[RMDB]
RNA sequence: GGGAACGACUCGAGUAGAGUCGAAAACGCCAACCAGAGACCAGGACGAAAAUGAAAGUCGACGAUUAACAAAGGACUUCGCUGGUCCCGCGAAAUGGACAAGCAUUGCGCUUUGUAAUUUAAAUGGCUCUUUUAUGGUGGCGGCCAUAAAAUGUAACGCAUUUAGUGGUUUCGACCACUAAAUGCGAAAAGAAACAACAACAACAAC
Reactivity to 2A3 in 0.01 (KOAc 150mM, MgCl2 10mM, bicine 150mM(pH8.5), 24C), signal-to-noise 1, nucleotides 027 to 156: c050g020c030c000a070a060c020c000a000g000a020g000a050c040c000a070g030g100a060c060g140a070a090a160a160u300g060a190a010a020g010u020c000g000a070c100g020a060u020u090a170a030c020a020a020a040g050g010a140c000u020u000c110g020c040u020g020g000u050c070c000c050g120c070g100a110a120a090u180g000g010a010c000a000a000g030c040a000u030u120g020c100g000c120u020u010u000g010u010a010a010u000u080u130a030a160a120u010g010g050c000u000c000u010u120u010u080a200u190g010g010u000g000g000c000g000g000c000c000a020u140a050a110a020a000u200g050u190a100a000
Chemical mapping of a 207-nucleotide RNA with 2A3. Reactivities are given for positions 27 through 156.